Chemical mapping of a 207-nucleotide RNA with 2A3.
For 2A3, 578 sequencing reads were counted.
The reactions ran in a buffer of 150 mM KOAc, 10 mM MgCl2 and 150 mM bicine (pH 8.5), at 24 C.
The data come from the RNA Mapping Database (RMDB), library VIROID.
2A3 adducts were read by reverse transcription with SuperScript II with manganese.

[RMDB]
RNA sequence: GGGAACGACUCGAGUAGAGUCGAAAAAAGGUGGGACUUUUCCUUCUGGAACCAAGCGGUUGGUUCCGAGGGGGGUGUGAUCCAGGUACCGCCGUAGAAACUGGAUUACGACGUCUACCCGGGAUUCAAACCCGGUCCCCUCCAGAAGUGAUUCUGGGAUAGGUUUGUACUUCGGUACAAACCUAUCAAAAGAAACAACAACAACAAC
Reactivity to 2A3 in 0.01 (KOAc 150mM, MgCl2 10mM, bicine 150mM(pH8.5), 24C), signal-to-noise 1, nucleotides 027 to 156: a000a000g130g000u140g040g040g000a020c020u170u100u120u130c050c030u060u080c180u180g000g000a010a000c000c000a000a030g120c070g210g090u030u030g000g000u000u020c000c000g000a000g020g030g010g000g010g010u050g000u030g010a000u000c000c010a000g000g000u010a000c040c070g000c030c050g000u030a050g070a070a300a020c130u110g000g000a040u070u010a000c050g010a010c050g010u020c030u030a010c000c000c000g050g030g010a100u220u220c080a170a020a130c000c000c000g000g010u000c000c000c000c010u020c010c000a010g000a080a010g020u030g030a110u060u110c000u000g000g000